[RMDB]
RNA sequence: GGGAACGACUCGAGUAGAGUCGAAAAAGUACGAUGGCUUACGAGCCAUCGUACACUUGGCCCAUGGGGAAAGAAGCCCCGCAAUUUCCCCAUGGCCCAGAGCUACCGGUCUACGGACCGGUAGCAACUCAAAUCUAUUGUUCGCAAUAGAUUUGAGAAAAGAAACAACAACAACAAC
Reactivity to DMS in 0.01 (KOAc 150mM, MgCl2 10mM, bicine 150mM(pH8.5), 24C), signal-to-noise 3, nucleotides 027 to 126: a060g000u000a000c000g020a000u000g000g030c010u000u020a100c190g020a060g030c010c000a000u010c000g010u000a000c010a010c090u010u010g000g000c300c000c000a020u000g000g000g000g010a000a020a010g010a180a150g020c030c120c140c230g010c080a130a210u020u000u000c000c000c000c000a000u000g000g000c240c000c070a040g020a140g010c000u010a000c000c000g010g020u000c000u000a140c160g010g000a010c000c000g000g000u000a000g000c010a000a030
Reactivity to 2A3 in 0.01 (KOAc 150mM, MgCl2 10mM, bicine 150mM(pH8.5), 24C), signal-to-noise 5, nucleotides 027 to 126: a010g010u000a000c000g000a000u000g000g010c010u060u040a060c270g070a020g000c010c000a000u000c000g000u000a000c000a000c000u020u030g010g010c040c000c000a000u010g010g000g000g010a010a020a030g050a090a070g060c080c130c070c010g010c020a050a100u010u000u000c000c000c000c000a000u000g000g000c000c000c010a050g020a020g000c000u000a000c000c000g000g000u010c010u030a100c290g100g000a000c000c000g000g000u000a000g000c000a000a000
Overview:
An RNA of 177 nucleotides, treated with DMS and 2A3 and read out base by base. DMS adducts were read by reverse transcription with MarathonRT. The RNA was probed in 150 mM KOAc, 10 mM MgCl2 and 150 mM bicine (pH 8.5) at 24 C. It was measured as part of the RMDB libraries RFM100 and RFMREP.